RNA sequence: GGGAACGACUCGAGUAGAGUCGAAAACACGGAAAAGAUCGAGCCAGGGUUCGGCAUCGAAAAACUGACCCUUGUCGCGGUCAUCGCCGAACCGCUUGAAGAGACGCAAAGAUCGUCCUCGCUGGUACAUUUAUCGGACGUUCGCGUCCGAUAAAUGAAAAGAAACAACAACAACAAC
Reactivity to 2A3 in 0.01 (KOAc 150mM, MgCl2 10mM, bicine 150mM(pH8.5), 24C), signal-to-noise 5, nucleotides 027 to 126: c060a020c020g120g070a050a070a050a050g110a060u150c080g010a000g010c000c010a040g040g000g000u030u050c030g010g000c040a050u100c110g140a040a060a020a070a070c060u040g010a020c040c000c020u070u210g300u110c150g010c120g030g000u000c000a020u080c050g000c000c000g010a010a000c010c010g010c010u030u020g040a080a010g050a000g020a020c020g020c040a120a220a090g040a160u140c020g000u030c000c040u000c020g020c040u030g010g020u070a050
Reactivity to DMS in 0.01 (KOAc 150mM, MgCl2 10mM, bicine 150mM(pH8.5), 24C), signal-to-noise 4, nucleotides 027 to 126: c080a200c160g000g000a060a050a030a060g000a040u000c110g000a140g000c010c210a040g000g000g000u010u010c000g000g000c010a100u020c240g010a160a050a080a100a130c200u000g000a010c000c010c010u040u010g010u060c270g000c170g030g000u000c010a030u030c080g000c000c000g000a010a030c010c000g040c030u000u020g000a120a070g000a100g020a040c010g010c080a100a090a140g010a070u010c000g010u000c040c030u000c030g010c040u000g000g000u020a090